[RMDB]
RNA sequence: GGGAACGACUCGAGUAGAGUCGAAAACGCACACCGACCAGAUCCCCCGCGGCGGCCCCCAACGUCGCCAGCGUGCCCGGCUCCAGCAGCAGUGCCCCGCCGGGGUCGAUGGCCUCGUCCGGGAUGCCCCUUGAAGGUCGUUCGCGACCUUCAAGGGAAAAGAAACAACAACAACAAC
Reactivity to 2A3 in 0.01 (KOAc 150mM, MgCl2 10mM, bicine 150mM(pH8.5), 24C), signal-to-noise 1, nucleotides 027 to 126: c070g010c000a020c000a040c040c040g040a050c030c020a000g010a080u040c010c000c000c000c020g040c000g000g000c020g000g000c010c010c000c020c020a030a020c020g000u040c010g010c020c000a020g020c010g020u090g070c000c000c000g000g040c020u030c020c030a050g020c000a020g010c040a050g100u070g070c000c030c000c000g010c000c020g000g000g000g070u030c020g080a120u180g000g010c000c000u010c010g060u050c050c060g000g030g000a010u090g030c000
Reactivity to DMS in 0.01 (KOAc 150mM, MgCl2 10mM, bicine 150mM(pH8.5), 24C), signal-to-noise 1, nucleotides 027 to 126: c100g080c050a130c100a070c020c070g010a050c070c040a070g000a140u000c000c000c020c060c040g030c030g000g020c030g020g070c020c000c060c000c040a230a070c110g000u000c130g050c000c080a000g000c030g000u000g050c000c000c040g000g000c010u060c080c250a120g000c080a050g010c140a040g010u020g000c080c020c120c160g000c210c000g000g000g000g000u030c010g040a060u070g000g000c000c010u000c030g020u010c120c050g000g000g000a030u000g000c030